[RMDB]
RNA sequence: GGGAACGACUCGAGUAGAGUCGAAAAGACGUGGCUUAAAGGCUCGCUUUAUGCCAGAACGAUGGCCGAUGCGAUGACAGUUGCACCCGUAGUUAUCAUCGGAUGCGUUGUAGCUUUAAUCGGUGCACAGACCCAACUUUUUCGAAAGUUGGGUCUGAAAAGAAACAACAACAACAAC
Reactivity to DMS in 0.01 (KOAc 150mM, MgCl2 10mM, bicine 150mM(pH8.5), 24C), signal-to-noise 3, nucleotides 027 to 126: g010a080c120g020u000g010g020c020u010u010a040a060a070g010g020c160u030c190g020c010u000u000u000a020u010g000c010c010a130g010a130a100c160g000a110u000g010g000c000c010g000a020u010g000c260g020a040u010g020a020c030a130g020u010u010g010c020a030c020c020c020g000u010a110g000u020u010a050u020c060a100u000c010g010g000a040u000g010c050g010u000u000g010u000a060g010c070u000u000u000a120a070u000c060g000g000u000g030c040a130
Reactivity to 2A3 in 0.01 (KOAc 150mM, MgCl2 10mM, bicine 150mM(pH8.5), 24C), signal-to-noise 2, nucleotides 027 to 126: g100a050c100g110u080g040g000c020u090u070a010a050a040g050g030c080u050c060g210c010u090u040u020a030u040g050c000c020a020g030a140a030c050g100a110u110g060g030c020c000g020a010u000g030c090g090a060u070g020a020c000a050g020u110u110g070c010a010c000c000c040g010u020a040g080u020u120a110u140c090a040u050c010g000g020a060u040g010c020g070u050u010g040u080a020g010c000u010u060u090a100a020u070c040g000g000u060g000c000a010
Description
Conditions: 150 mM KOAc, 10 mM MgCl2 and 150 mM bicine (pH 8.5), 24 C. Structure probing data (DMS and 2A3) for a 177-nucleotide construct. Values cover nucleotides 27 to 126. It was measured as part of the RMDB library OK2TST.